[RMDB]
RNA sequence: GGGAACGACUCGAGUAGAGUCGAAAAGAUAUGGAGAAUCGGGUGGCAUUGUCGAAGAACUCGGAAACGAGGGAGACAAUGAACUACCACAGAUUCUCCUAAGUCAAAAGUCAGGUUCGCCUGACAAGUUGUACUCCAUGUUCGCAUGGAGUACAACAAAAGAAACAACAACAACAAC
Reactivity to 2A3 in 0.01 (KOAc 150mM, MgCl2 10mM, bicine 150mM(pH8.5), 24C), signal-to-noise 1, nucleotides 027 to 126: g000a010u130a040u110g000g010a010g010a030a000u020c040g190g000g020u020g000g040c020a020u020u010g000u000c040g110a300a080g000a110a090c000u010c000g000g040a050a030a040c030g000a010g000g000g060a050g010a000c010a000a000u020g000a030a090c020u060a030c010c010a100c010a070g010a000u020u000c000u010c000c000u000a040a010g030u020c000a030a060a060a060g010u000c000a000g030g020u030u130c220g120c080c010u000g000a010c000a000a030
Reactivity to DMS in 0.01 (KOAc 150mM, MgCl2 10mM, bicine 150mM(pH8.5), 24C), signal-to-noise 2, nucleotides 027 to 126: g000a050u000a300u000g000g010a020g000a010a010u000c000g000g020g050u000g000g000c000a000u000u000g010u000c000g010a130a120g010a140a130c010u010c000g000g000a170a040a170c010g000a020g030g010g000a110g000a040c010a000a000u000g000a100a080c030u000a250c010c000a030c060a140g000a010u000u000c000u000c000c000u000a010a020g010u000c020a080a160a130a090g000u000c000a020g010g000u000u000c300g000c010c000u010g000a000c000a000a050